Chemical mapping of a 177-nucleotide RNA with 2A3 and DMS.
The reactions ran in a buffer of 150 mM KOAc, 10 mM MgCl2 and 150 mM bicine (pH 8.5), at 24 C.
RNA sequence: GGGAACGACUCGAGUAGAGUCGAAAAGAUAUGGAACGAAUCUGUUUGUCAGUACGAAGCAUCGGAAACGAUGCUGUACUUGGAUUUAACAGACUAUUCCUAAGUCAAAGUACUCUUCGGAGUACAACGUCAUAACUGUCUUCGGACAGUUAUGACGAAAAGAAACAACAACAACAAC
Reactivity to 2A3 in 0.01 (KOAc 150mM, MgCl2 10mM, bicine 150mM(pH8.5), 24C), signal-to-noise 1, nucleotides 027 to 126: g020a020u100a050u170g020g000a000a050c070g060a080a300u000c000u020g050u000u010u040g040u000c030a010g000u010a020c110g130a300a040g000c000a010u020c010g040g000a000a060a050c000g000a010u050g000c000u000g000u000a000c030u010u130g060g020a000u040u300u200a010a000c000a000g040a020c020u050a030u020u000c000c000u020a140a010g050u030c040a140a060a110g010u030a010c000u040c000u010u060c300g070g010a000g000u040a020c010a000a010
Reactivity to DMS in 0.01 (KOAc 150mM, MgCl2 10mM, bicine 150mM(pH8.5), 24C), signal-to-noise 1, nucleotides 027 to 126: g010a050u010a220u010g000g010a010a040c060g020a060a140u000c000u000g020u000u000u020g000u020c000a040g020u000a000c020g000a070a100g000c000a010u000c000g000g010a070a080a120c000g010a020u010g030c000u020g010u000a000c000u000u000g030g020a050u000u000u000a010a000c010a000g020a000c040u000a300u000u000c010c000u020a110a150g010u010c020a090a110a100g020u000a000c000u000c000u000u010c130g000g000a030g030u010a000c010a090a060